[RMDB]
RNA sequence: GGGAACGACUCGAGUAGAGUCGAAAACCUCUCACGGUUUCAUCUGUGAGAAGCUUCAAAGAACUGCAAUAGAAGUCUAGCUCGAGAUGCGUGUGCCGGUUUGCUUUUAAUGCAAUAUGGUUCCUUUUUCUUAUGUUAAAUUCGUUUAACAUAAGAAAAAAGAAACAACAACAACAAC
Reactivity to DMS in 0.01 (KOAc 150mM, MgCl2 10mM, bicine 150mM(pH8.5), 24C), signal-to-noise 4, nucleotides 027 to 126: c010c030u000c010u000c000a010c010g020g020u000u050u050c120a050u030c010u000g000u000g010a000g010a050a080g010c050u000u010c070a060a140a170g000a090a130c110u010g010c120a050a090u000a130g000a070a050g020u000c070u010a080g010c010u010c030g000a030g000a060u010g010c020g020u000g010u000g020c020c010g010g010u000u000u010g010c020u010u000u040u020a070a080u030g000c020a030a070u030a110u010g020g000u000u000c020c000u000u000u010
Reactivity to 2A3 in 0.01 (KOAc 150mM, MgCl2 10mM, bicine 150mM(pH8.5), 24C), signal-to-noise 9, nucleotides 027 to 126: c000c000u010c000u010c000a010c000g010g050u060u300u210c090a160u070c010u000g040u030g020a000g000a010a010g010c010u100u060c050a080a120a090g070a140a120c070u100g060c060a030a080u050a170g050a070a010g030u030c040u070a030g030c000u010c040g050a060g030a060u090g060c020g020u100g030u060g070c020c010g070g010u030u050u040g010c020u040u140u080u270a120a080u170g010c020a020a040u060a080u130g060g000u010u030c000c000u000u000u000
Chemical mapping of a 177-nucleotide RNA with DMS and 2A3. For 2A3 the reverse transcriptase was SuperScript II with manganese. The RNA was probed in 150 mM KOAc, 10 mM MgCl2 and 150 mM bicine (pH 8.5) at 24 C.